[RMDB]
RNA sequence: GGGAACGACUCGAGUAGAGUCGAAAAUAUUAGGGUGUGAGAGUAUCUCUCUCCCAGCCGGUUCGCGCAGCCAUCUUUUUCGACUUUACUUGGGUUAGCUGCGCGAACUGGCUGGCGAUCCCAGCAACAUCCCAUAGUGUUUCGACACUAUGGGAUGAAAAGAAACAACAACAACAAC
Reactivity to 2A3 in 0.01 (KOAc 150mM, MgCl2 10mM, bicine 150mM(pH8.5), 24C), signal-to-noise 3, nucleotides 027 to 126: u140a060u170u170a050g060g000g010u040g010u030g010a010g000a010g050u260a300u090c070u010c000u010c000u000c040c010c000a000g000c000c000g000g000u010u000c000g000c000g000c010a000g010c010c030a070u040c080u080u240u040u060u150c060g100a090c080u150u160u220a080c040u140u160g020g000g020u010u030a010g020c000u000g000c000g000c000g000a000a010c010u010g000g010c000u000g000g010c000g000a010u010c010c000c010a000g020c010a010a060
Reactivity to DMS in 0.01 (KOAc 150mM, MgCl2 10mM, bicine 150mM(pH8.5), 24C), signal-to-noise 3, nucleotides 027 to 126: u000a040u010u000a130g010g010g010u000g000u000g000a000g010a030g030u010a110u020c060u000c010u000c020u010c000c000c010a020g020c000c000g000g010u000u000c010g010c010g010c010a010g040c010c150a050u010c030u010u010u000u010u000c060g000a050c080u000u010u010a070c190u000u000g000g000g010u010u000a030g020c000u000g000c010g000c000g000a010a000c010u000g000g000c000u000g000g000c030g000a030u000c010c000c010a210g010c180a080a120